Overview:
Chemical mapping of a 207-nucleotide RNA with 2A3. The 2A3 profile rests on 634 reads. The RNA was probed in 150 mM KOAc, 10 mM MgCl2 and 150 mM bicine (pH 8.5) at 24 C. The data come from the RNA Mapping Database (RMDB), library M2RFPK.
[RMDB]
RNA sequence: GGGAACGACUCGAGUAGAGUCGAAAAGACGGUGGCUGCAAGUCGCAUCGCAAAACCGCGGCAAGUGGAGUUAGCGAGAGGAGGCUGGGUGUUGGCUUCCUUAAGCAAUCGGUCACCGAGAAGGUGUUAAACGGCGCAUGCUUCGGCAUGCGCCGAACAGCUCAAUGUAGUUCGCUACAUUGAGCUGAAAAGAAACAACAACAACAAC
Reactivity to 2A3 in 0.01 (KOAc 150mM, MgCl2 10mM, bicine 150mM(pH8.5), 24C), signal-to-noise 1, nucleotides 027 to 156: g080a020c020g000g000u000g000g010c010u020g010c120a140a100g030u100c040g110c060a060u030c020g000c000a070a090a050a030c010c080g020c010g050g060c190a280a030g040u020g020g010a130g030u100u090a020g010c010g000a030g000a020g030g000a010g000g000c020u120g070g150g060u100g090u070u190g020g000c000u000u000c010c000u010u010a040a030g000c000a030a030u110c020g000g000u000c000a010c000c000g010a020g010a020a030g040g010u020g010u060u100a100a150a080c030g000g000c000g010c000a000u000g020c010u050u100c100g030g000c000a010u000g000c010g000c000c000g050a010a000